Chemical mapping of a 177-nucleotide RNA with DMS and 2A3. It was measured as part of the RMDB library OK2TRN. For DMS the reverse transcriptase was MarathonRT.
RNA sequence: GGGAACGACUCGAGUAGAGUCGAAAACUUGCACGACCUUAGCAUUGCCCAAAAGGUCAUUCCUAGGAGUGGAGUGAAGCACUGAGAUUCCAGACUCUCUCUAGGCAGUGCUUAUGCCAAACCUGAGCUUCGUCCUCAUAUUCGUAUGAGGACGAAGAAAAGAAACAACAACAACAAC
Reactivity to DMS in 0.01 (KOAc 150mM, MgCl2 10mM, bicine 150mM(pH8.5), 24C), signal-to-noise 2, nucleotides 027 to 126: c280u010u000g020c040a120c090g030a020c020c010u000u010a130g020c020a060u000u000g000c020c000c040a050a010a080a030g020g010u010c000a260u000u000c030c070u010a020g030g000a100g020u000g000g000a050g000u000g010a010a010g040c020a030c000u010g000a060g010a210u000u000c020c060a080g020a060c170u000c120u000c100u000c010u010a060g030g010c040a050g010u010g010c000u000u010a130u050g020c030c010a010a060a050c010c010u000g010a150g030
Reactivity to 2A3 in 0.01 (KOAc 150mM, MgCl2 10mM, bicine 150mM(pH8.5), 24C), signal-to-noise 3, nucleotides 027 to 126: c010u030u060g000c010a030c070g010a010c010c010u010u020a020g030c030a080u010u190g120c000c000c010a050a100a020a010g030g030u010c000a020u120u110c010c040u080a060g020g030a060g030u050g000g010a050g040u110g080a030a000g010c010a010c040u020g000a040g030a290u210u140c040c000a050g010a130c040u060c010u010c020u010c020u140a130g040g000c000a010g030u010g000c010u050u020a060u100g000c010c010a040a040a040c020c010u060g110a050g060